[RMDB]
RNA sequence: GGGAACGACUCGAGUAGAGUCGAAAAGGCGACUAAUACCGCAUACCUCGACGGACUGAUGAAGCCAUACCUGUCCCGCCUGCUGGAAGAACUGGGACAGGUAGAAAAAGCAGUACUGCGCAUUGCGCGUAUAGGUAGCGUUCGCGCUACCUAUACGAAAAGAAACAACAACAACAAC
Reactivity to DMS in 0.01 (KOAc 150mM, MgCl2 10mM, bicine 150mM(pH8.5), 24C), signal-to-noise 9, nucleotides 027 to 126: g010g020c020g020a130c080u010a080a120u000a130c130c010g010c040a080u000a130c090c040u000c050g020a150c070g000g000a060c050u010g000a100u010g000a120a090g000c060c070a170u000a010c000c000u000g010u000c000c000c010g010c100c030u000g000c120u010g000g020a150a070g000a060a070c140u010g010g000g010a020c000a010g000g000u000a000g000a020a040a080a130a100g010c040a030g010u000a100c090u010g010c030g010c050a110u010u000g010c070g020
Reactivity to 2A3 in 0.01 (KOAc 150mM, MgCl2 10mM, bicine 150mM(pH8.5), 24C), signal-to-noise 9, nucleotides 027 to 126: g030g000c020g020a030c060u120a050a090u070a160c040c010g000c030a030u090a130c010c030u060c050g090a100c050g040g090a160c030u040g020a060u080g060a130a010g020c020c000a010u010a010c000c000u000g000u010c010c000c000g010c010c030u140g070c070u150g070g040a140a060g020a160a090c140u160g000g000g000a000c000a000g000g000u000a000g000a000a050a000a000a000g020c030a000g020u070a160c060u080g010c020g000c090a150u080u240g030c060g000

The record gives the reactivity of an RNA of 177 nucleotides to DMS and 2A3. For 2A3, 28,151 sequencing reads were counted. The data come from the RNA Mapping Database (RMDB), library OK2TRN. For 2A3 the reverse transcriptase was SuperScript II with manganese. DMS adducts were read by reverse transcription with MarathonRT. Reactivities are rounded to 0.1 and cut off at 0 and 3.